[RMDB]
RNA sequence: GGGAACGACUCGAGUAGAGUCGAAAACGACAGCGACGUUCUGCCGGGAUACCGACGGAAUUUCAGACAAGCCAAAGGGUAAUAGCUUUGGUUGACCUACACCGAAAAGGAAAUAGGUGUCGUUGGUCAUAGUCGACGUAUUCGUACGUCGACUAUGAAAAGAAACAACAACAACAAC
Reactivity to 2A3 in 0.01 (KOAc 150mM, MgCl2 10mM, bicine 150mM(pH8.5), 24C), signal-to-noise 7, nucleotides 027 to 126: c030g060a010c010a010g010c010g030a020c020g040u050u000c010u010g010c010c010g000g010g070a160u210a290c040c040g040a020c010g010g020a030a040u030u080u110c060a070g030a060c030a060a000g010c000c000a000a000a000g020g010g010u020a020a030u020a070g040c000u000u000u000g000g000u000u020g000a000c000c000u020a020c020a030c050c010g070a180a140a100a060g040g030a050a050a040u060a010g000g000u010g000u010c000g000u000u020g050g010u020
Reactivity to DMS in 0.01 (KOAc 150mM, MgCl2 10mM, bicine 150mM(pH8.5), 24C), signal-to-noise 4, nucleotides 027 to 126: c020g000a030c000a100g000c300g000a030c070g000u030u000c000u000g010c030c000g000g000g000a220u020a090c050c000g000a010c000g010g000a010a000u000u000u010c010a070g040a140c170a120a030g000c010c000a010a000a010g000g000g010u010a080a050u010a300g010c000u000u000u000g000g000u000u000g000a030c020c000u000a000c180a300c010c010g010a040a060a050a160g010g000a050a070a300u000a020g000g010u000g020u000c030g000u010u000g000g010u050
Chemical mapping of a 177-nucleotide RNA with 2A3 and DMS. For DMS the reverse transcriptase was MarathonRT. The reactions ran in a buffer of 150 mM KOAc, 10 mM MgCl2 and 150 mM bicine (pH 8.5), at 24 C. Source: RMDB libraries RFM100 and RFMREP, as collected in RNAgym.